[RMDB]
RNA sequence: GGGAACGACUCGAGUAGAGUCGAAAAAUAGAGAUAGGAGUCAUACAACCCCAGAAACCAUUCCUUAUACCUUGAGUAUUGCUGAAUUCAGUUUAGCGUGCAUGCUCUUGGCUAUUCUCAUAGUGAUAAAAUCUGUAGUCCUUCGGGACUACAGAAAGCUAUACGGGUUGUUCGCAACCCGUAUAGCAAAAGAAACAACAACAACAAC
Reactivity to DMS in 0.01 (KOAc 150mM, MgCl2 10mM, bicine 150mM(pH8.5), 24C), signal-to-noise 1, nucleotides 027 to 156: a080u000a110g000a090g020a090u000a060g000g010a030g060u000c030a130u000a170c100a110a090c020c020c000c020a110g000a230a050a130c060c020a130u010u000c030c020u010u010a260u000a030c010c010u020u020g010a040g010u000a040u010u010g040c040u010g010a070a080u010u000c130a190g010u020u000u000a110g030c060g020u000g030c040a140u000g030c020u000c000u020u000g020g070c020u010a060u010u000c010u000c070a070u000a060g030u000g020a110u000a040a080a050a080u010c000u000g000u000a000g000u000c010c000u010u020c300g070g040g000a020c010u020a000c000a020g000a010a010a060
Reactivity to 2A3 in 0.01 (KOAc 150mM, MgCl2 10mM, bicine 150mM(pH8.5), 24C), signal-to-noise 3, nucleotides 027 to 156: a000u070a020g020a030g010a000u080a120g060g040a000g020u040c040a010u020a250c060a060a100c040c000c000c020a010g110a070a030a010c070c030a140u050u060c010c010u130u080a040u040a110c000c000u010u030g010a000g000u000a050u180u170g030c000u010g060a110a150u190u170c040a090g090u040u090u110a050g020c050g050u080g010c020a010u030g010c000u000c000u030u010g000g000c010u070a100u150u050c040u010c010a100u170a090g090u130g110a090u080a080a070a080a100u000c000u000g000u000a000g000u000c000c020u000u040c070g040g010g010a000c000u010a000c000a010g000a000a000a000